This 177-nucleotide RNA was probed chemically with DMS and 2A3. The DMS profile rests on 840 reads. DMS adducts were read by reverse transcription with MarathonRT.
[RMDB]
RNA sequence: GGGAACGACUCGAGUAGAGUCGAAAAUUCAGAGCCUUCGGGCUCUGAACCGUUUUCCUUGUUCCCAUUAUUGGUAACUCGGUAAUAAAAGCAAAGUUGCCGCAACUUGUUCGUUCGCGAACAAGAAACUAGUGAGGACAUUCGUGUCCUCACUAGUAAAAGAAACAACAACAACAAC
Reactivity to DMS in 0.01 (KOAc 150mM, MgCl2 10mM, bicine 150mM(pH8.5), 24C), signal-to-noise 1, nucleotides 027 to 126: u000u000c020a000g030a010g040c000c000u000u010c260g040g010g010c010u000c000u010g000a000a010c090c110g010u000u000u000u000c000c050u000u010g000u000u000c010c000c010a180u030u000a090u000u010g010g000u000a010a000c040u000c300g010g010u000a020a120u020a030a060a170a230g000c060a030a040a050g030u010u000g000c000c000g000c300a070a230c000u000u010g010u000u000c000g000u000u010c160g010c020g030a010a000c000a000a000g000a100a110
Reactivity to 2A3 in 0.01 (KOAc 150mM, MgCl2 10mM, bicine 150mM(pH8.5), 24C), signal-to-noise 1, nucleotides 027 to 126: u060u010c000a010g000a000g010c000c000u040u100c280g040g030g000c010u010c000u010g000a000a000c020c020g050u040u060u000u000c040c000u050u100g000u010u000c040c000c020a020u210u210a100u080u170g020g000u010a010a030c010u010c050g080g000u050a080a080u110a190a270a020a020g070c090a100a000a010g010u010u010g000c000c030g000c030a050a130c000u000u000g000u000u000c010g020u040u040c190g000c000g090a000a010c010a000a000g030a080a040